[RMDB]
RNA sequence: GGGAACGACUCGAGUAGAGUCGAAAAAACUGACGCAGUACUUGAUGCACAUGGCUACCAAAUACUCCCAGUGAGUUUGUAUGAGGUUAUGGAAAAAAUUUAUCAAAAAGAAUUGGAUGCCUCGUGGCUACUAGACCAGGUUCGCCUGGUCUAGUAGAAAAGAAACAACAACAACAAC
Reactivity to 2A3 in 0.01 (KOAc 150mM, MgCl2 10mM, bicine 150mM(pH8.5), 24C), signal-to-noise 3, nucleotides 027 to 126: a000a010c060u060g050a040c040g000c010a000g050u090a040c040u030u060g010a040u050g060c020a010c000a080u100g040g000c020u040a040c040c000a030a040a020u170a030c010u010c030c000c040a050g050u110g110a050g020u060u070u150g060u050a110u050g010a010g010g040u060u140a020u160g230g000a070a040a000a000a030a090u100u110u050a170u150c050a000a000a140a000a000g050a070a060u140u040g090g040a010u040g000c010c000u000c020g020u010g060g020
Reactivity to DMS in 0.01 (KOAc 150mM, MgCl2 10mM, bicine 150mM(pH8.5), 24C), signal-to-noise 3, nucleotides 027 to 126: a120a030c020u000g000a050c050g000c030a030g000u020a060c060u000u000g000a060u010g010c040a080c040a040u040g000g000c010u000a090c050c030a040a070a070u010a100c110u000c000c010c040a090g050u020g000a130g000u020u000u020g000u020a040u010g000a090g030g030u000u010a110u020g010g000a020a040a060a030a050a040u010u020u010a070u040c090a070a100a030a090a070g000a040a060u010u000g000g000a130u010g000c010c000u010c020g030u030g000g030